Chemical mapping of a 177-nucleotide RNA with 2A3. High 2A3 reactivity points to a flexible backbone, as in loops and unpaired stretches. Source: RMDB library OK1LIB, as collected in RNAgym.
RNA sequence: GGGAACGACUCGAGUAGAGUCGAAAAUAUGAAUAAGAAUUCCGGUCUUUUCCGGAGCCACCAAGUGGAAUGCUACGUGCAUAAAUGCACGUAGCUAAAGACCCGAAGGCUAGCAAUAGCUAGCCCAGGCAUGAUAUCAGUUCGCUGAUAUCAUGCCAAAAGAAACAACAACAACAAC
Reactivity to 2A3 in 0.01 (KOAc 150mM, MgCl2 10mM, bicine 150mM(pH8.5), 24C), signal-to-noise 1, nucleotides 027 to 126: u190a040u030g010a010a120u180a290a070g050a040a080u090u030c000c000g020g000u000c170u000u060u100u020c000c000g020g000a000g000c000c000a010c050c000a140a150g020u050g000g020a040a100u150g000c000u000a030c000g080u000g030c000a090u130a290a090a030u070g000c000a000c000g000u000a000g000c000u000a000a000a000g030a030c000c000c010g090a060a080g000g000c000u000a000g000c000a000a300u090a210g010c010u000a000g000c000c000c000a000